[RMDB]
RNA sequence: GGGAACGACUCGAGUAGAGUCGAAAAGCUGAGUAUACGAGGUUAGUUCAUUCUCGUAUGCAUGAUUGGACAAAUUAAAAUCUCAAUUUGGAUCAGCGCCUCCCUCCAGCGACGGCCGAACAUACAACUAGUAUUGUAGCUUCGGCUACAAUACUAGAAAAGAAACAACAACAACAAC
Reactivity to 2A3 in 0.01 (KOAc 150mM, MgCl2 10mM, bicine 150mM(pH8.5), 24C), signal-to-noise 4, nucleotides 027 to 126: g020c010u010g010a010g030u030a010u010a020c000g010a010g040g050u080u090a050g080u150u190c060a050u170u040c020u010c010g010u010a010u020g010c010a070u090g010a070u010u080g070g030a000c030a040a110a050u170u190a150a190a130a140u070c080u020c130a020a050u030u030u100g100g000a050u040c020a010g000c010g040c000c010u010c010c000c000u010c010c020a020g010c010g050a040c020g070g000c030c050g010a040a030c000a030u160a030c020a050a030
Reactivity to DMS in 0.01 (KOAc 150mM, MgCl2 10mM, bicine 150mM(pH8.5), 24C), signal-to-noise 4, nucleotides 027 to 126: g020c030u000g000a090g010u000a020u000a030c020g000a020g000g020u000u010a140g010u010u000c120a090u010u010c000u010c010g000u000a010u000g010c030a100u010g010a050u000u000g000g010a060c080a040a070a090u000u010a060a080a090a100u010c050u000c040a030a040u010u000u000g020g010a220u000c020a020g010c010g010c050c030u000c030c010c020u000c020c030a080g010c040g010a050c060g000g000c060c080g010a030a030c070a060u000a110c150a040a140